[RMDB]
RNA sequence: GGGAACGACUCGAGUAGAGUCGAAAAGCAGCCUUUAGUGCAGAUCUUGGUGGAAGUAGCAAAUAUUCAAGUGGGAUCCUUGAAGACUGAAGUGGGGAAGGGUUCCAUGGUAACAGCAGUUGGACAUAUCUUUCUAGCCAUUCGUGGCUAGAAAGAUAAAAGAAACAACAACAACAAC
Reactivity to 2A3 in 0.01 (KOAc 150mM, MgCl2 10mM, bicine 150mM(pH8.5), 24C), signal-to-noise 3, nucleotides 027 to 126: g040c040a010g030c030c000u070u120u130a100g020u070g050c020a010g010a070u000c010u070u120g060g000u060g000g040a070a030g040u090a010g000c030a030a070a070u180a120u130u140c060a110a020g040u010g010g010g020a010u000c000c030u020u030g050a090a040g030a050c090u120g050a110a050g060u080g030g000g000g030a010a020g020g000g000u000u020c000c000a000u030g030g000u120a110a040c050a050g080c020a030g020u030u020g010g020a000c020a070u040
Reactivity to DMS in 0.01 (KOAc 150mM, MgCl2 10mM, bicine 150mM(pH8.5), 24C), signal-to-noise 1, nucleotides 027 to 126: g040c030a080g000c090c060u010u010u010a010g020u030g070c140a120g000a010u000c010u010u020g020g030u030g030g000a000a030g000u000a010g020c010a080a170a100u020a100u020u000c060a110a090g040u010g020g020g000a070u000c000c000u000u000g000a060a120g010a090c030u020g030a030a100g020u020g040g000g000g000a030a010g000g000g000u000u000c050c000a030u000g010g000u040a000a090c180a000g020c130a080g000u010u020g000g000a100c080a110u010
Structure probing data (2A3 and DMS) for a 177-nucleotide construct.
It was measured as part of the RMDB libraries RFM100 and RFMREP.
The RNA was probed in 150 mM KOAc, 10 mM MgCl2 and 150 mM bicine (pH 8.5) at 24 C.
High DMS reactivity at an A or C suggests that its Watson-Crick edge is free.
DMS adducts were read by reverse transcription with MarathonRT.